RNA sequence: GGGAACGACUCGAGUAGAGUCGAAAAGUAUCCAUGUUCGCAUGGAUACGAAAUAUGGGCGCGUAUAUCCGGUUGGCUGGAUGCGCGCGUCUGGCUGGCCGGUGGUGCUAGUCUUCGGACUAGCAAAUUAUAUCCUACACUUCGGUGUAGGAUAUAAAAAAGAAACAACAACAACAAC
Reactivity to DMS in 0.01 (KOAc 150mM, MgCl2 10mM, bicine 150mM(pH8.5), 24C), signal-to-noise 5, nucleotides 027 to 126: g010u000a000u000c000c010a000u000g010u000u020c190g040c010a010u000g000g000a010u000a000c000g000a050a070a100u000a070u000g010g000g010c050g010c070g010u010a110u010a080u010c000c010g010g010u000u000g010g020c000u010g000g000a020u000g010c050g020c200g000c010g020u000c010u000g000g010c010u000g000g000c000c010g010g010u000g000g020u000g010c000u000a000g000u000c000u000u010c190g010g000a010c000u000a010g000c000a010a020a060
Reactivity to 2A3 in 0.01 (KOAc 150mM, MgCl2 10mM, bicine 150mM(pH8.5), 24C), signal-to-noise 2, nucleotides 027 to 126: g010u000a000u030c000c000a000u000g020u020u090c220g000c120a000u000g000g000a000u000a000c000g010a010a020a000u270a050u070g070g020g000c060g000c060g080u100a090u020a050u250c000c000g000g040u010u020g050g000c020u010g030g000a010u020g030c130g050c020g000c000g010u010c000u000g000g040c000u000g010g030c030c020g050g000u050g030g080u070g010c000u000a000g010u000c000u010u030c250g070g010a000c000u000a010g000c000a000a000a000
An RNA of 177 nucleotides, treated with DMS and 2A3 and read out base by base. High DMS reactivity at an A or C suggests that its Watson-Crick edge is free. For 2A3 the reverse transcriptase was SuperScript II with manganese. Conditions: 150 mM KOAc, 10 mM MgCl2 and 150 mM bicine (pH 8.5), 24 C. The DMS profile rests on 12,038 reads. The data come from the RNA Mapping Database (RMDB), library M2PK50. The 2A3 profile rests on 3,426 reads.